[RMDB]
RNA sequence: GGGAACGACUCGAGUAGAGUCGAAAAUGGCAAGGCUCUUUGGAUGCUGUAAUGCCGCAUCUGAUGCAUCAGCAUAAGUCCAUUACAACCCUACAGGGAGAGGAUAUAGUUUUCCUUGCUACAGACACACCGAAGUACGAUUCGUCGUACUUCGGUGAAAAGAAACAACAACAACAAC
Reactivity to DMS in 0.01 (KOAc 150mM, MgCl2 10mM, bicine 150mM(pH8.5), 24C), signal-to-noise 3, nucleotides 027 to 126: u010g000g000c020a150a070g010g000c060u000c020u030u010u000g000g030a040u000g020c000u000g020u000a060a060u030g020c170c210g000c060a070u010c030u000g010a050u000g000c190a110u000c140a040g000c040a030u010a040a090g020u010c030c020a010u000u000a110c150a120a080c010c030c020u000a110c110a040g000g000g000a040g000a040g010g040a100u010a110u020a150g000u000u000u000u010c000c000u000u020g010c100u010a080c130a080g010a150c300a110
Reactivity to 2A3 in 0.01 (KOAc 150mM, MgCl2 10mM, bicine 150mM(pH8.5), 24C), signal-to-noise 2, nucleotides 027 to 126: u050g000g000c030a060a010g080g000c000u000c000u110u040u040g050g000a010u010g000c030u050g050u120a110a070u230g040c010c000g020c010a040u010c030u020g000a040u030g010c090a070u030c050a090g000c010a020u010a170a000g030u010c000c010a010u020u090a050c030a090a150c020c000c010u020a040c050a080g030g030g010a050g010a020g080g040a050u090a050u090a300g080u030u040u020u030c000c000u030u010g000c000u040a050c040a050g100a010c020a000